[RMDB]
RNA sequence: GGGAACGACUCGAGUAGAGUCGAAAACAUGGAAGGCCCGCUGACACACAACAUUCAAAAAAUGAAUGGUAAGAUUUAAGGCUGGAGCAAAGCUAUAUGGGUAAACUACUUGGAUUAGUAGGGCGCCAUCACUACAAUGUUUCGACAUUGUAGUGAUAAAAGAAACAACAACAACAAC
Reactivity to DMS in 0.01 (KOAc 150mM, MgCl2 10mM, bicine 150mM(pH8.5), 24C), signal-to-noise 7, nucleotides 027 to 126: c060a090u000g010g000a170a130g010g010c040c010c030g010c060u010g020a120c130a090c100a090c120a120a130c010a020u010u000c010a000a040a110a090a140a100u010g010a020a010u000g000g000u010a070a080g010a120u010u000u000a090a120g000g020c020u010g030g010a110g010c070a050a060a100g010c070u010a080u010a070u010g010g010g010u000a030a240a130c020u000a000c020u000u010g010g000a110u000u000a010g010u000a030g000g000g020c300g010c020c050
Reactivity to 2A3 in 0.01 (KOAc 150mM, MgCl2 10mM, bicine 150mM(pH8.5), 24C), signal-to-noise 4, nucleotides 027 to 126: c030a050u110g050g060a070a080g100g010c000c030c000g000c030u040g040a020c020a000c010a000c010a180a030c000a040u000u010c030a040a060a060a070a060a160u090g010a010a010u010g010g050u080a070a060g040a090u070u120u100a070a000g030g000c020u070g080g000a100g050c060a080a050a000g010c040u050a040u030a080u300g050g000g010u060a040a040a020c010u050a020c020u050u070g140g100a090u130u020a030g000u020a030g020g000g000c020g000c020c010
An RNA of 177 nucleotides, treated with DMS and 2A3 and read out base by base.
The RNA was probed in 150 mM KOAc, 10 mM MgCl2 and 150 mM bicine (pH 8.5) at 24 C.
The 2A3 profile rests on 5,357 reads.
Values cover nucleotides 27 to 126.
For DMS the reverse transcriptase was MarathonRT.
For DMS, 6,677 sequencing reads were counted.